[RMDB]
RNA sequence: GGGAACGACUCGAGUAGAGUCGAAAAAGGAAGAAGGAAGGUGGAAAGAAAGGAGGGACCCUCCCGAUCCGAGGGGCCCAACCACCAAGUUUGGAGAGCACUCCGGGCCGAAUGGUCGAGUAGCACUGGGGGUCCAUGUUCGCAUGGACCAAAAGAAACAACAACAACAAC
Reactivity to DMS in 0.01 (KOAc 150mM, MgCl2 10mM, bicine 150mM(pH8.5), 24C), signal-to-noise 2, nucleotides 027 to 129: a020g000g000a000a000g000a060a030g030g040a030a020g030g040u050g060g000a060a030a040g030a050a060a050g040g020a210g000g000g000a040c040c050c020u030c020c070c020g000a010u070c170c260g030a050g000g000g000g000c000c000c040a100a100c030c060a080c020c000a050a020g030u010u040u020g010g000a000g020a120g010c060a100c070u020c000c080g000g000g000c090c040g020a070a130u030g020g030u020c050g010a000g000u010a080g030c110a100c000u000g000g030g050
Reactivity to 2A3 in 0.01 (KOAc 150mM, MgCl2 10mM, bicine 150mM(pH8.5), 24C), signal-to-noise 4, nucleotides 027 to 129: a000g030g000a000a000g020a010a000g040g020a010a020g000g040u070g010g040a060a070a030g130a080a070a010g070g010a030g000g000g010a000c010c000c000u000c000c040c040g040a040u030c040c030g000a010g000g000g000g000c000c030c000a030a090c010c030a050c020c020a060a020g040u060u040u060g040g000a060g010a020g010c020a030c070u000c030c000g020g000g000c030c030g030a090a080u160g000g000u010c020g000a020g000u080a010g030c050a010c110u050g010g000g010